[RMDB]
The record gives the reactivity of an RNA of 207 nucleotides to DMS and 2A3. High 2A3 reactivity points to a flexible backbone, as in loops and unpaired stretches. The reactions ran in a buffer of 150 mM KOAc, 10 mM MgCl2 and 150 mM bicine (pH 8.5), at 24 C. Source: RMDB library OK3TST, as collected in RNAgym. The 2A3 profile rests on 4,796 reads.

RNA sequence: GGGAACGACUCGAGUAGAGUCGAAAAUUAACUGCAAUGUACCAUCCAAAUGUUUCCCUGAAAGUUGCAAGCCUUCAAUAGACUCCAGAUUUCCAAAACAGUUAUAUCAGACAUACUCUGUCAGUGCAAUUAUUGCCUAAGCAGGGAGACAGAUUCCUGUUAACAAAGAAUUCGUUCUUUGUUAACAAAAAGAAACAACAACAACAAC
Reactivity to DMS in 0.01 (KOAc 150mM, MgCl2 10mM, bicine 150mM(pH8.5), 24C), signal-to-noise 3, nucleotides 027 to 156: u010u010a080a090c050u000g000c050a050a060u000g060u020a120c050c040a070u000c040c020a050a100a130u000g010u000u000u000c020c020c020u010g010a090a120a190g010u010u010g010c040a080a110g010c000c010u020u000c090a080a170u000a060g010a030c010u000c020c040a180g020a130u000u000u000c030c000a070a060a070a070c050a090g000u000u000a070u010a080u000c040a130g010a050c050a090u000a100c050u000c030u000g020u000c060a080g050u010g000c030a060a090u000u010a080u000u000g030c020c030u000a070a110g030c010a030g000g000g020a060g010a060c020a060g000a190u000u000c020c050
Reactivity to 2A3 in 0.01 (KOAc 150mM, MgCl2 10mM, bicine 150mM(pH8.5), 24C), signal-to-noise 6, nucleotides 027 to 156: u080u020a050a030c030u030g020c060a050a090u090g000u100a100c020c030a050u070c030c020a080a080a100u070g010u010u020u020c020c010c000u030g070a150a100a020g050u090u070g040c020a010a030g020c010c010u070u050c040a090a150u070a120g050a060c030u020c040c020a030g030a180u050u090u030c050c000a020a060a060a070c010a020g030u110u050a100u020a040u210c010a010g060a070c010a020u080a080c050u040c020u070g050u050c030a040g010u040g100c010a030a050u130u030a110u200u120g020c000c000u040a050a010g050c010a010g010g010g000a010g000a000c000a000g060a020u050u050c020c040